Structure probing data (2A3 and DMS) for a 177-nucleotide construct. For 2A3 the reverse transcriptase was SuperScript II with manganese. DMS adducts were read by reverse transcription with MarathonRT. The data come from the RNA Mapping Database (RMDB), library M2PK50.

RNA sequence: GGGAACGACUCGAGUAGAGUCGAAAAGGUCUACGGUUCGCCGUAGACCAAAGAGUGCAUGGUAGCAGAAGAAAAGCCGAAGAAAAGUGCACGGCAGCACAAAAAUCCCAUCCUUCGGGAUGGGAAACCUAUAGGACCAGUUCGCUGGUCCUAUAGGAAAAGAAACAACAACAACAAC
Reactivity to 2A3 in 0.01 (KOAc 150mM, MgCl2 10mM, bicine 150mM(pH8.5), 24C), signal-to-noise 1, nucleotides 027 to 126: g000g000u000c010u010a010c000g080g010u020u050c170g020c070c030g000u000a000g000a000c010c000a000a000a000g000a000g020u100g020c060a010u070g100g000u090a040g000c040a030g030a170a010g020a000a230a050a080g020c020c040g020a080a090g060a070a300a030a010g010u010g000c010a010c000g050g000c060a010g070c020a010c040a030a210a020a000a000u020c000c000c000a000u000c000c000u030u040c210g070g030g000a020u000g000g000g060a000a000a000
Reactivity to DMS in 0.01 (KOAc 150mM, MgCl2 10mM, bicine 150mM(pH8.5), 24C), signal-to-noise 2, nucleotides 027 to 126: g020g000u000c000u000a010c020g010g010u000u000c300g010c000c000g030u000a000g000a010c000c000a010a020a050g010a090g000u020g020c060a080u000g000g000u000a080g000c030a050g020a110a070g000a060a050a110a090g020c020c030g010a070a110g010a050a090a040a180g010u000g000c000a050c080g010g020c040a100g000c020a020c090a020a050a120a060a130u000c000c000c000a000u000c000c000u000u010c250g020g000g000a010u000g010g020g000a000a010a020